[RMDB]
RNA sequence: GGGAACGACUCGAGUAGAGUCGAAAAUGGAUCUGCAACAACACCAUAUAUCCGCAGAUCCUAAGGAUGUAUGGCCAACUGAUCCGAGAGGAUCUACAUUAAGGCGAAGGUCAAAUCUACGUUAAUACCGACCUGAAGCCGAAGGUAUUAACGGACACGGAUGCAGUGGAUUCGUCCACUGCAUCCGAAAAGAAACAACAACAACAAC
Reactivity to 2A3 in 0.01 (KOAc 150mM, MgCl2 10mM, bicine 150mM(pH8.5), 24C), signal-to-noise 1, nucleotides 027 to 156: u080g000g000a000u000c000u020g000c010a080a080c030a000a010c000a080c020c030a000u020a030u050a100u140c040c050g020c020a000g030a020u020c000c000u010a070a010g050g040a010u030g000u120a050u060g030g030c000c000a040a040c090u030g000a000u050c040c030g030a000g020a010g030g010a000u000c000u060a080c050a080u150u130a180a020g100g020c060g040a010a000g050g000u030c080a100a030a060u090c160u130a080c020g000u000u000a000a000u000a010c030c000g020a010c030c080u020g080a080a000g080c000c010g020a000a030g000g000u000a000u000u010a000a000c000g020g000a080c190a030

This 207-nucleotide RNA was probed chemically with 2A3. For 2A3, 606 sequencing reads were counted. Reactivities are rounded to 0.1 and cut off at 0 and 3. Values cover nucleotides 27 to 156. 2A3 is a SHAPE reagent: it acylates the 2'-hydroxyl of flexible nucleotides of all four kinds.